[RMDB]
RNA sequence: GGGAACGACUCGAGUAGAGUCGAAAAGAUAUGGACAUUAGCUUGGAUUUAACGUCCCUUCGGAAACGAAGGGAGCGUUUGUCAGCUAAGUCCUAAGUCAAAACAAGGGAACUUCGGUUCCCUUGAACUAGUUCGGUAAGUUCGCUUACCGAACUAGAAAAGAAACAACAACAACAAC
Reactivity to 2A3 in 0.01 (KOAc 150mM, MgCl2 10mM, bicine 150mM(pH8.5), 24C), signal-to-noise 3, nucleotides 027 to 126: g030a020u020a010u080g000g020a050c300a300u010u020a000g020c040u180u280g300g040a230u300u250u300a050a000c000g040u010c010c000c010u000u000c000g000g020a020a010a010c010g000a000a000g000g000g020a010g000c010g000u070u150u300g120u040c010a000g010c000u010a000a000g000u000c000c000u000a010a010g010u010c020a030a010a100a110c010a000a020g020g000g010a000a000c000u080u120c300g020g000u000u000c000c010c000u000u000g010a000a000
Reactivity to DMS in 0.01 (KOAc 150mM, MgCl2 10mM, bicine 150mM(pH8.5), 24C), signal-to-noise 3, nucleotides 027 to 126: g000a010u010a160u010g000g000a030c000a130u000u000a020g020c010u000u020g040g010a130u000u010u010a020a000c020g020u000c000c000c000u000u010c000g010g010a060a040a080c000g020a000a000g000g010g000a010g010c000g010u000u000u000g010u000c030a040g000c010u000a010a010g000u000c000c000u000a020a060g000u000c020a100a090a100a270c010a020a000g000g000g010a020a000c010u000u010c210g040g020u000u000c000c000c000u010u000g000a040a120

An RNA of 177 nucleotides, treated with 2A3 and DMS and read out base by base.
Conditions: 150 mM KOAc, 10 mM MgCl2 and 150 mM bicine (pH 8.5), 24 C.
Source: RMDB library TTRDEL, as collected in RNAgym.
For DMS the reverse transcriptase was MarathonRT.